[RMDB]
RNA sequence: GGGAACGACUCGAGUAGAGUCGAAAACAAAGAAAGGGAGAUCGAUAUGCUGAUUUCAAGCUCUUGAUGCGUGUGACUCGUAAAGGGCUACGGGCACUGUGUCUUAUGUCUGCCAUACUCAUGCACCACCCGUCCGCGUAUUCGUACGCGGACGGGUAAAAGAAACAACAACAACAAC
Reactivity to 2A3 in 0.01 (KOAc 150mM, MgCl2 10mM, bicine 150mM(pH8.5), 24C), signal-to-noise 2, nucleotides 027 to 126: c040a000a170a070g180a200a200a020g110g070g000a040g010a040u060c020g030a000u060a040u240g070c070u080g030a020u090u050u200c090a040a020g000c000u030c040u090u140g050a030u080g000c060g030u060g050u040g100a110c100u000c030g000u030a000a000a070g080g000g040c000u000a000c000g000g010g000c020a020c000u050g000u000g020u140c030u060u080a090u090g090u000c000u000g080c000c000a080u000a020c070u000c020a010u010g020c040a020c020c000